[RMDB]
RNA sequence: GGGAACGACUCGAGUAGAGUCGAAAAUUUUACUGCUUUGUCCACUUAGGAGGUAACAGGACUGCCAACCUGGCAGUGUGCAAUGACAACAAAUCACCACGAGACGUUUCAUUUAAAAAUUGGCACUCGCCCAUUUCGGUUUCGACCGAAAUGGGCGAAAAGAAACAACAACAACAAC
Reactivity to 2A3 in 0.01 (KOAc 150mM, MgCl2 10mM, bicine 150mM(pH8.5), 24C), signal-to-noise 1, nucleotides 027 to 126: u240u190u070u070a000c000u000g010c070u060u030u180g000u120c000c000a060c000u030u010a060g010g170a180g040g000u030a000a060c000a300g100g030a000c000u000g000c030c000a000a000c240c100u000g000g040c000a000g010u010g000u110g000c010a000a000u070g000a140c000a010a000c000a000a240a000u030c000a010c000c000a060c170g110a000g040a070c070g000u100u000u100c130a100u000u140u300a140a300a020a020a090u060u060g060g000c000a000c000u000

The data come from the RNA Mapping Database (RMDB), library RFM100. An RNA of 177 nucleotides, treated with 2A3 and read out base by base. The RNA was probed in 150 mM KOAc, 10 mM MgCl2 and 150 mM bicine (pH 8.5) at 24 C. For 2A3, 268 sequencing reads were counted.